Background: The data come from the RNA Mapping Database (RMDB), library M2PK50. This 177-nucleotide RNA was probed chemically with 2A3 and DMS. The DMS profile rests on 766 reads. For 2A3, 1,084 sequencing reads were counted. The RNA was probed in 150 mM KOAc, 10 mM MgCl2 and 150 mM bicine (pH 8.5) at 24 C. DMS adducts were read by reverse transcription with MarathonRT.
[RMDB]
RNA sequence: GGGAACGACUCGAGUAGAGUCGAAAAAUCCUGCCCUUCGGGGCAGGAUGCAGCUUCGCACUUGAGAGCGCGACUUAAGAGGAAUCCCAACGCGCAGAAGCACUAUUUCUCAGUUCGCUGAGAAAAACUAUACUGGAUGCUUCGGCAUCCAGUAUAGAAAAGAAACAACAACAACAAC
Reactivity to 2A3 in 0.01 (KOAc 150mM, MgCl2 10mM, bicine 150mM(pH8.5), 24C), signal-to-noise 1, nucleotides 027 to 126: a000u000c000c010u000g010c000c010c000u080u060c280g000g000g000g050c010a000g010g000a010u000g000c040a020g000c050u060u070c030g000c060a140c070u080u070g040a070g010a010g160c010g000c040g050a150c040u080u090a060a030g030a020g190g020a030a100u000c060c000c020a030a060c000g000c010g040c000a030g020a060a000g000c000a010c060u050a110u040u030u030c010u000c000a030g020u020u060c270g000c040u000g040a000g000a010a000a000a000a040
Reactivity to DMS in 0.01 (KOAc 150mM, MgCl2 10mM, bicine 150mM(pH8.5), 24C), signal-to-noise 1, nucleotides 027 to 126: a050u000c000c000u000g000c010c000c020u000u020c130g010g030g000g050c000a000g000g000a000u000g000c100a240g000c040u010u000c010g010c030a120c130u010u010g010a130g010a140g010c010g040c020g030a090c040u020u000a100a070g000a140g000g010a110a070u000c000c000c000a080a150c110g000c030g040c040a050g030a030a040g000c010a150c140u010a130u000u000u000c020u000c010a040g010u000u060c180g000c030u010g030a020g010a000a000a030a100a280